[RMDB]
The record gives the reactivity of an RNA of 177 nucleotides to DMS.

RNA sequence: GGGAACGACUCGAGUAGAGUCGAAAAGAUAUGGAGUGGUAAGGGAGGAGGAUAUUCGGAAACGAAUGCACUCCUUUGAUCUUACGUAACAUCUCCUAAGUCAAACUCUAAAGUUCGCUUUAGAGAAGAGCCAUCACUAGUUCGCUAGUGAUGGCUCAAAAGAAACAACAACAACAAC
Reactivity to DMS in 0.01 (KOAc 150mM, MgCl2 10mM, bicine 150mM(pH8.5), 24C), signal-to-noise 1, nucleotides 027 to 126: g000a010u000a000u020g000g000a010g080u000g010g000u030a020a020g000g000g010a000g050g050a020g000g000a110u010a010u000u010c000g000g000a020a000a060c000g020a000a020u000g020c300a060c000u000c000c000u000u000u000g000a080u010c000u000u010a000c020g050u020a060a240c210a110u000c010u000c020c000u020a000a120g000u000c010a070a160a200c010u000c000u000a010a000a020g030u000u000c300g100c010u000u010u000a010g000a020g000a080a050
The data come from the RNA Mapping Database (RMDB), library TTRDEL. Conditions: 150 mM KOAc, 10 mM MgCl2 and 150 mM bicine (pH 8.5), 24 C.